Source information: This 177-nucleotide RNA was probed chemically with DMS and 2A3. It was measured as part of the RMDB library OK2TRN. The reactions ran in a buffer of 150 mM KOAc, 10 mM MgCl2 and 150 mM bicine (pH 8.5), at 24 C. The 2A3 profile rests on 2,192 reads.

RNA sequence: GGGAACGACUCGAGUAGAGUCGAAAAGAGGCUGAGGCAGGAGAAUGGCGUGAACCCGAAAGCAGAGCUGGCAGUGAGCCGAGAUCGCACCACUGCACUACCGCCUGGGUGACAGAGCAAGACUCUGGUGCCAUACUAUGUUCGCAUAGUAUGGCACAAAAGAAACAACAACAACAAC
Reactivity to DMS in 0.01 (KOAc 150mM, MgCl2 10mM, bicine 150mM(pH8.5), 24C), signal-to-noise 3, nucleotides 027 to 126: g000a090g000g010c040u000g000a090g010g010c050a040g010g010a110g010a070a090u010g010g020c030g000u000g010a060a080c040c020c010g010a070a110a080g010c050a060g010a090g030c110u010g040g000c010a050g020u000g000a120g020c050c030g000a130g000a040u010c070g010c070a090c100c020a050c020u000g000c030a070c090u000a060c070c050g020c020c060u000g000g000g010u000g000a170c000a050g000a030g000c030a080a090g010a300c020u000c030u010g010
Reactivity to 2A3 in 0.01 (KOAc 150mM, MgCl2 10mM, bicine 150mM(pH8.5), 24C), signal-to-noise 2, nucleotides 027 to 126: g050a030g010g040c030u040g040a010g030g000c030a000g020g040a030g040a080a120u110g000g040c010g020u050g020a040a030c000c000c050g050a070a020a000g010c040a030g010a020g080c070u080g030g000c000a010g020u010g050a020g040c040c010g030a040g020a110u160c040g000c020a010c060c010a020c010u040g020c030a040c050u070a070c000c020g010c000c010u030g000g060g030u070g000a020c000a030g010a000g050c040a100a120g010a070c010u010c020u070g010